[RMDB]
RNA sequence: GGGAACGACUCGAGUAGAGUCGAAAACGCUGAUUCUCACGACAGCGCGUGCCGCGCGCACGGGUUGGUGUGACACAGGCGGGACACCAGCACCAGGAGAGGCUUAAGCUCGGGAGGCAGCGCCACCUGACUCCGUUCCUUUCGAGGAACGGAGUCAAAAAGAAACAACAACAACAAC
Reactivity to 2A3 in 0.01 (KOAc 150mM, MgCl2 10mM, bicine 150mM(pH8.5), 24C), signal-to-noise 4, nucleotides 027 to 126: c020g000c010u030g010a150u300u000c040u000c010a010c060g020a030c040a060g010c010g020c020g050u040g060c010c040g110c040g020c020g030c040a030c060g040g000g000u000u040g010g010u000g010u070g100a080c030a020c020a200g270g000c130g000g050g030a000c010a000c010c000a010g000c060a190c090c010a030g070g040a070g070a030g080g000c070u170u210a110a020g060c030u030c060g000g000g030a010g010g000c010a000g000c040g010c010c000a050c020c010
Reactivity to DMS in 0.01 (KOAc 150mM, MgCl2 10mM, bicine 150mM(pH8.5), 24C), signal-to-noise 1, nucleotides 027 to 126: c000g000c030u040g090a170u060u010c000u020c000a070c000g000a110c140a020g000c140g030c020g060u000g000c000c000g000c130g000c130g000c000a120c110g000g090g040u000u000g000g000u000g000u000g080a080c120a040c190a190g100g000c010g000g000g000a050c060a120c040c000a060g020c050a130c000c000a160g000g000a000g060a090g030g000c060u000u090a260a030g000c000u010c050g000g000g020a140g010g000c050a000g000c090g020c000c000a130c040c060